[RMDB]
RNA sequence: GGGAACGACUCGAGUAGAGUCGAAAAGGACUGGACCAGGACCACAGGUACCGCCGGACCCAUAUAAGGUACCAACCAGAAUAAGACAGAUACAUAAUGGGCAGCACAGUGUAGCCAGUCAGAAACGCGUGCCUAGUCUACGGCACGAGGGAGCUAACUACCCAGUGGUAUUCGUACCACUGGGUAGAAAAGAAACAACAACAACAAC
Reactivity to DMS in 0.01 (KOAc 150mM, MgCl2 10mM, bicine 150mM(pH8.5), 24C), signal-to-noise 1, nucleotides 027 to 156: g060g010a090c000u000g010g020a220c030c100a140g000g050a240c000c010a050c090a060g010g020u000a050c000c020g040c090c050g000g010a110c060c020c000a100u000a160u020a050a090g000g040u000a090c020c000a100a190c060c000a130g020a100a150u000a090a070g020a210c050a140g000a010u000a070c130a100u000a130a030u030g020g000g040c060a100g000c020a200c050a010g020u000g000u020a080g040c010c000a090g000u010c040a120g020a020a050a060c020g010c000g010u000g000c000c000u000a240g000u010c120u030a160c170g020g020c000a040c040g000a000g020g020g020a060g020c010u000a140a100
Reactivity to 2A3 in 0.01 (KOAc 150mM, MgCl2 10mM, bicine 150mM(pH8.5), 24C), signal-to-noise 1, nucleotides 027 to 156: g050g000a010c030u030g000g010a100c000c100a110g080g000a040c080c020a060c050a140g010g000u040a020c000c020g050c000c040g200g020a020c000c000c050a030u090a070u030a030a070g030g000u000a050c000c010a030a000c040c040a050g060a160a090u150a150a000g010a040c050a000g110a020u080a130c000a000u110a100a100u120g010g040g000c040a000g000c090a060c000a050g000u010g000u160a000g120c000c000a020g040u040c000a000g120a000a030a010c000g000c000g010u010g000c010c000u020a020g020u070c060u100a100c190g000g000c000a000c000g020a100g000g070g000a020g040c000u040a000a090